[RMDB]
RNA sequence: GGGAACGACUCGAGUAGAGUCGAAAAGAUAUGGAAUGUGUGAGCUUUUGACGAGCUGACACUCGGAAACGAGUGCAGCUCGAUAAGCUCCACAUUCCUAAGUCAAACGUGACCUUCGGGUCACGAACUACUGGCAUGAGUUCGCUCAUGCCAGUAGAAAAGAAACAACAACAACAAC
Reactivity to 2A3 in 0.01 (KOAc 150mM, MgCl2 10mM, bicine 150mM(pH8.5), 24C), signal-to-noise 2, nucleotides 027 to 126: g020a000u070a020u160g010g020a040a000u030g010u030g070u190g030a010g000c030u150u140u250u300g300a300c090g000a020g010c000u020g120a270c000a000c010u000c000g010g020a060a110a070c040g000a010g020u000g000c000a000g000c000u000c010g000a000u000a010a000g020c020u050c000c010a000c000a010u000u020c000c000u000a020a020g000u000c020a050a050a040c000g020u010g010a010c000c000u030u060c300g100g000g000u000c000a000c000g010a030a020
Reactivity to DMS in 0.01 (KOAc 150mM, MgCl2 10mM, bicine 150mM(pH8.5), 24C), signal-to-noise 2, nucleotides 027 to 126: g010a030u000a300u020g000g000a010a000u000g000u000g030u030g010a020g010c000u000u000u020u010g030a270c180g000a000g050c000u020g000a100c010a030c000u000c010g000g020a100a130a200c000g000a020g000u000g000c000a000g010c000u000c000g030a030u020a010a010g000c000u000c000c000a000c000a000u000u000c000c000u000a020a120g000u000c080a130a130a210c020g020u000g010a010c010c000u000u000c240g010g000g000u010c000a010c000g000a080a160